The data come from the RNA Mapping Database (RMDB), libraries RFM100 and RFMREP. Structure probing data (DMS and 2A3) for a 177-nucleotide construct. 2A3 adducts were read by reverse transcription with SuperScript II with manganese. The RNA was probed in 150 mM KOAc, 10 mM MgCl2 and 150 mM bicine (pH 8.5) at 24 C. Reactivities are rounded to 0.1 and cut off at 0 and 3.

RNA sequence: GGGAACGACUCGAGUAGAGUCGAAAAUUGGAUUUAAUUAUGUAGGUCCAAACUAUUCCCCCCCAGUAGGUUAGCUUGCUAAAUAUUCUGUCACUUUUGCGAUCCCAUCGCUAGAAAUAGCUUAAUUCACAUAAGUUUUAUUCGUAAAACUUAUGUGAAAAGAAACAACAACAACAAC
Reactivity to DMS in 0.01 (KOAc 150mM, MgCl2 10mM, bicine 150mM(pH8.5), 24C), signal-to-noise 3, nucleotides 027 to 126: u010u020g000g000a000u000u010u000a070a130u020u050a140u020g010u000a070g010g010u000c010c010a010a010a110c150u010a300u010u010c000c020c000c030c010c000c010a050g020u020a020g000g010u010u000a080g020c020u010u000g010c050u010a040a070a120u010a080u010u010c010u000g000u000c030a060c040u000u000u000u010g020c110g020a110u000c000c000c010a100u010c150g020c000u000a040g000a070a080a130u000a010g010c010u010u020a040a090u010u010
Reactivity to 2A3 in 0.01 (KOAc 150mM, MgCl2 10mM, bicine 150mM(pH8.5), 24C), signal-to-noise 4, nucleotides 027 to 126: u020u010g010g010a010u060u040u100a170a140u180u250a210u300g170u100a030g030g000u000c000c000a010a010a020c070u080a130u040u030c000c000c000c000c000c000c000a020g050u060a030g060g060u030u040a010g020c020u020u070g020c020u070a100a080a050u130a100u080u050c020u030g080u050c010a030c040u040u070u050u100g030c040g050a060u030c010c010c010a040u100c070g000c010u000a010g030a020a080a050u020a000g000c000u030u070a070a050u080u000